Chemical mapping of a 177-nucleotide RNA with 2A3 and DMS. The RNA was probed in 150 mM KOAc, 10 mM MgCl2 and 150 mM bicine (pH 8.5) at 24 C.

[RMDB]
RNA sequence: GGGAACGACUCGAGUAGAGUCGAAAACUUAACUGACCAGCUAGAGAAAGGCCGAGAGGUUUAAGUCUAGAGGGCAGAAAACCCUGUAAAGCAGCGCUAAACAUACGGGGUGGUCGGUUCGGCGGUAUAGGGAAACAUAGUUCGCUAUGUUUCCCUAAAAAGAAACAACAACAACAAC
Reactivity to 2A3 in 0.01 (KOAc 150mM, MgCl2 10mM, bicine 150mM(pH8.5), 24C), signal-to-noise 2, nucleotides 027 to 126: c050u110u130a090a050c010u020g130a260c000c000a000g060c000u030a000g010a020g050a210a000a020g010g060c000c000g050a060g000a040g060g020u020u070u080a100a000g000u000c000u000a010g000a020g020g000g000c020a000g100a030a010a040a040c010c020c000u030g010u060a050a100a060g040c110a050g070c040g000c100u160a170a060a030c030a020u120a020c010g000g000g000g000u070g020g080u100c030g020g010u090u030c010g000g060c000g020g020u050a120
Reactivity to DMS in 0.01 (KOAc 150mM, MgCl2 10mM, bicine 150mM(pH8.5), 24C), signal-to-noise 3, nucleotides 027 to 126: c060u010u010a110a140c000u000g000a110c000c020a070g010c010u000a010g010a050g000a070a150a140g000g000c000c010g040a170g000a180g000g010u010u010u010a090a180g010u010c000u010a010g010a140g010g000g000c020a020g000a080a070a060a070c000c020c000u010g000u000a030a110a070g000c050a080g010c110g020c070u000a040a120a100c100a070u010a040c040g000g000g010g000u000g000g020u000c050g030g010u020u000c040g000g000c090g000g010u010a110